This 207-nucleotide RNA was probed chemically with DMS and 2A3.
RNA sequence: GGGAACGACUCGAGUAGAGUCGAAAAAGGCUGUUUGCCAUCGGCCCACCAUUACCACUGCCCGAAUCCAACGAUGCUGGAAUGAGGAACGAGGAAUUGGUCGCGAACCCUGUUAUUACCCGGGCGCUGUUUGGGUGGUCACAGAUUGCGUGGCUGCCGUACAGAAAAGGUUCGCCUUUUCUGUACGAAAAGAAACAACAACAACAAC
Reactivity to DMS in 0.01 (KOAc 150mM, MgCl2 10mM, bicine 150mM(pH8.5), 24C), signal-to-noise 1, nucleotides 027 to 156: a070g010g030c020u000g030u000u000u000g020c020c030a140u000c020g050g040c010c010c040a070c040c010a100u000u000a100c010c020a130c100u000g050c040c010c000g000a170a090u000c080c030a050a110c040g030a100u000g040c030u000g000g000a050a060u000g010a120g000g010a050a080c050g010a170g000g000a110a110u000u000g020g000u000c010g020c030g030a050a080c030c010c030u000g000u000u000a060u000u000a060c000c000c000g000g010g000c040g000c080u010g020u000u010u000g000g020g040u000g020g020u000c040a070c000a070g010a120u020u010g010c000g020u000g040g020c020u000g020c050
Reactivity to 2A3 in 0.01 (KOAc 150mM, MgCl2 10mM, bicine 150mM(pH8.5), 24C), signal-to-noise 4, nucleotides 027 to 156: a010g050g020c070u090g040u150u140u160g050c030c020a040u070c040g050g020c020c030c000a030c000c000a030u050u130a110c040c030a060c060u080g020c020c000c020g030a050a050u010c020c000a060a030c060g160a100u210g070c090u040g040g030a170a300u110g000a060g040g010a030a060c030g020a040g040g040a040a130u070u150g000g030u020c050g000c010g040a040a050c010c000c010u010g010u040u040a060u030u070a040c020c010c000g010g010g020c150g070c230u160g030u040u060u040g020g000g000u000g000g010u000c020a010c000a020g100a120u120u300g020c030g010u030g010g010c010u010g000c000
Reactivities are given for positions 27 through 156. Source: RMDB library OK3TST, as collected in RNAgym.